RNA sequence: GGGAACGACUCGAGUAGAGUCGAAAAGCCGUUGCGGUCACGGGGCACCGCAAUCUCGACCUGUCCGCACGCAUCGGUUAUCACCUUCUUGUUACGAGAUCCGUUGCGUGAGUUUCCACUUCCACGCACAUAGUAAGGCAUUCGUGCCUUACUAUGUAAAAGAAACAACAACAACAAC
Reactivity to DMS in 0.01 (KOAc 150mM, MgCl2 10mM, bicine 150mM(pH8.5), 24C), signal-to-noise 9, nucleotides 027 to 126: g020c080c090g020u000u000g010c030g010g000u010c100a130c160g010g000g010g020c300a090c030c020g020c040a030a040u000c070u000c040g000a070c040c030u000g000u010c040c040g010c030a020c020g000c010a010u000c010g000g000u010u000a120u010c050a110c130c110u000u010c140u000u010g000u010u010a130c160g000a050g000a090u000c010c020g010u000u000g000c010g020u000g000a080g000u000u000u000c010c030a110c150u000u000c040c030a080c160g010c170
Reactivity to 2A3 in 0.01 (KOAc 150mM, MgCl2 10mM, bicine 150mM(pH8.5), 24C), signal-to-noise 9, nucleotides 027 to 126: g090c030c030g010u010u020g010c010g000g020u030c060a050c190g080g020g080g000c070a010c020c020g010c020a020a030u050c050u020c030g050a060c000c010u030g050u090c020c030g020c020a010c000g010c000a010u020c010g030g000u060u120a050u060c020a060c070c020u120u110c100u180u300g170u190u190a100c130g010a010g010a070u020c000c000g010u000u010g000c000g000u010g000a000g000u000u020u010c020c010a040c040u100u020c050c030a090c080g050c020

Structure probing data (DMS and 2A3) for a 177-nucleotide construct. The RNA was probed in 150 mM KOAc, 10 mM MgCl2 and 150 mM bicine (pH 8.5) at 24 C. DMS adducts were read by reverse transcription with MarathonRT.